[RMDB]
RNA sequence: GGGAACGACUCGAGUAGAGUCGAAAAGAUAUGGAGUUGAACUACUCUUUAAGCAGACGAAGAACUCGGAAACGAGGGAGUCUGUGGAGAGAGCAACUCCUAAGUCAAAGUACCGUUCGCGGUACAACCUAGUGCACUGGUUCGCCAGUGCACUAGGAAAAGAAACAACAACAACAAC
Reactivity to DMS in 0.01 (KOAc 150mM, MgCl2 10mM, bicine 150mM(pH8.5), 24C), signal-to-noise 1, nucleotides 027 to 126: g010a040u000a300u000g040g000a000g000u000u000g030a030a040c100u030a300c000u000c000u020u020u020a300a300g000c000a010g010a040c000g000a070a110g000a260a180c000u020c000g000g000a160a070a200c000g030a040g000g000g010a110g000u000c000u000g010u000g030g000a200g000a000g020a010g000c010a000a030c000u000c000c000u000a000a040g010u000c010a060a040a210g000u000a000c010c000g010u000u000c290g100c020g020g000u000a010c010a040a050
Reactivity to 2A3 in 0.01 (KOAc 150mM, MgCl2 10mM, bicine 150mM(pH8.5), 24C), signal-to-noise 1, nucleotides 027 to 126: g060a020u070a050u150g000g010a060g010u020u020g030a140a070c050u190a120c000u280c000u030u040u010a040a010g020c000a000g010a000c040g050a300a100g020a090a110c010u020c000g020g050a110a070a060c020g000a030g040g060g000a020g000u000c000u010g030u030g010g010a050g000a000g000a000g040c000a000a000c010u030c010c000u020a120a000g010u020c050a120a080a060g020u000a010c000c000g030u040u090c300g000c000g080g020u000a000c000a020a050